Structure probing data (2A3) for a 177-nucleotide construct.
The reactions ran in a buffer of 150 mM KOAc, 10 mM MgCl2 and 150 mM bicine (pH 8.5), at 24 C.
The 2A3 profile rests on 613 reads.
Source: RMDB library RFM100, as collected in RNAgym.
RNA sequence: GGGAACGACUCGAGUAGAGUCGAAAAGAAUUCUACUGGAGGAUUCCGCUCCUUUGCGCUUUUUUUUCGGAUUAGGCGUGGAGGCGAAAGUCACCCUCCUCGCAUCGCAAGUUCGUGCUUGCGACUUUAGUGCUUGUCAGUUCGCUGACAAGCACUAAAAAGAAACAACAACAACAAC
Reactivity to 2A3 in 0.01 (KOAc 150mM, MgCl2 10mM, bicine 150mM(pH8.5), 24C), signal-to-noise 2, nucleotides 027 to 126: g040a000a030u110u020c050u060a010c020u100g080g020a010g000g010a000u010u000c020c010g000c010u090c000c000u120u080u040g080c070g060c090u070u050u020u000u010u000u000u140c120g130g030a090u150u000a030g000g000c000g000u000g020g000a030g000g000c030g100a210a060a000g080u040c020a050c010c000c000u000c000c000u000c010g010c000a120u020c000g000c000a000a000g000u160u300c100g150u300g120c000u000u000g000c000g010a000c000u030u030
Overview: 2A3 adducts were read by reverse transcription with SuperScript II with manganese.